[RMDB]
RNA sequence: GGGAACGACUCGAGUAGAGUCGAAAAGCGGUUUUCUGUGAUGCGAUCAGCCGCGCCUACGGUUGGGGAGCCCACGACACCGUUCUGCAGUGCGCUCCGUUGACAUCGGACAUCAGCGUCGAGGAGACCUUCCUCUCCAGUUCGCUGGAGAGGAAGGAAAAGAAACAACAACAACAAC
Reactivity to 2A3 in 0.01 (KOAc 150mM, MgCl2 10mM, bicine 150mM(pH8.5), 24C), signal-to-noise 3, nucleotides 027 to 126: g000c010g030g050u030u020u110u080c060u090g130u110g080a050u140g010c050g040a060u010c040a030g030c020c000g020c020g060c010c010u070a060c060g060g000u020u090g030g020g000g010a010g010c000c020c020a030c000g030a010c030a010c050c000g010u100u050c060u080g050c050a060g000u020g100c030g010c020u000c020c000g020u040u050g020a030c000a060u100c080g040g000a060c000a110u120c070a070g020c010g060u060c020g030a090g050g020a040g010a020
Reactivity to DMS in 0.01 (KOAc 150mM, MgCl2 10mM, bicine 150mM(pH8.5), 24C), signal-to-noise 1, nucleotides 027 to 126: g000c000g010g000u020u000u030u030c040u000g000u000g000a080u060g000c080g010a090u000c120a090g000c000c010g000c010g000c120c010u000a060c100g030g050u000u000g000g000g000g000a130g040c010c030c000a050c070g010a060c180a000c110c040g020u000u040c040u000g010c130a080g040u000g000c300g000c040u000c000c000g050u010u010g000a050c040a090u000c060g030g000a090c040a070u020c000a060g000c090g000u050c040g010a090g010g000a140g010a130